An RNA of 177 nucleotides, treated with DMS and 2A3 and read out base by base. Reactivities are given for positions 27 through 126. For 2A3 the reverse transcriptase was SuperScript II with manganese. The 2A3 profile rests on 4,257 reads.
[RMDB]
RNA sequence: GGGAACGACUCGAGUAGAGUCGAAAACACUCUUUCACUUGCCUAGGAGAGAGGCGAGUUCCAAAUAUUAUUUCAUAUGGAAAUGUACUACAUGAAUACUAUGAAAUUCAUGAAAUUUUUGGCAACGACCAUCCCUACUGUUCGCAGUAGGGAUGGUAAAAGAAACAACAACAACAAC
Reactivity to DMS in 0.01 (KOAc 150mM, MgCl2 10mM, bicine 150mM(pH8.5), 24C), signal-to-noise 2, nucleotides 027 to 126: c080a160c060u000c040u010u010u000c020a050c050u020u000g000c030c010u030a130g000g020a040g000a010g000a000g000g010c120g020a200g000u000u000c010c000a000a120a100u010a130u050u030a070u000u000u000c020a090u020a050u000g020g000a010a090a000u020g000u030a030c290u060a060c010a010u000g000a000a030u010a100c140u020a080u030g050a050a140a050u000u010c090a010u000g000a050a030a070u000u000u000u010u000g000g000c040a060a150c250g020
Reactivity to 2A3 in 0.01 (KOAc 150mM, MgCl2 10mM, bicine 150mM(pH8.5), 24C), signal-to-noise 6, nucleotides 027 to 126: c040a010c030u060c010u020u120u100c070a070c080u020u040g010c000c000u030a030g080g020a040g010a010g000a000g020g050c070g040a010g040u040u000c020c000a000a080a030u190a050u230u030a030u020u060u020c040a040u040a120u240g150g030a030a030a020u070g020u090a160c030u050a020c080a010u020g040a050a030u060a100c070u110a080u210g070a120a070a020u060u040c030a050u090g070a070a090a080u130u130u020u030u030g010g000c020a030a000c050g060
The data come from the RNA Mapping Database (RMDB), library OK1LIB. For DMS the reverse transcriptase was MarathonRT. The reactions ran in a buffer of 150 mM KOAc, 10 mM MgCl2 and 150 mM bicine (pH 8.5), at 24 C.